The record gives the reactivity of an RNA of 177 nucleotides to DMS.

RNA sequence: GGGAACGACUCGAGUAGAGUCGAAAAGAUAUGGAAGAGUAUGUUGGCCGAGAAGUGAACUACUUCGUAGGAUCGGAAACGAUCUGAAGAAGCACUUCGUUUGACGCCAACAUACUCUUCCUAAGUCGAUUAAGAAUGAGUUCGCUCAUUCUUAAUCAAAAGAAACAACAACAACAAC
Reactivity to DMS in 0.01 (KOAc 150mM, MgCl2 10mM, bicine 150mM(pH8.5), 24C), signal-to-noise 9, nucleotides 027 to 126: g010a100u010a300u010g000g000a020a010g000a020g010u000a010u000g010u000u000g010g010c000c030g010a140g010a020a010g010u000g000a070a040c090u020a300c010u000u000c000g000u000a300g000g000a010u010c000g020g000a090a100a240c000g010a010u010c010u010g000a090a300g000a030a020g010c000a010c040u000u000c000g010u010u010u010g010a150c300g000c010c000a000a000c000a000u000a000c000u000c000u000u000c000c000u000a010a090g010u000c090
Description
Conditions: 150 mM KOAc, 10 mM MgCl2 and 150 mM bicine (pH 8.5), 24 C. Values cover nucleotides 27 to 126. DMS adducts were read by reverse transcription with MarathonRT. It was measured as part of the RMDB library TTRINS.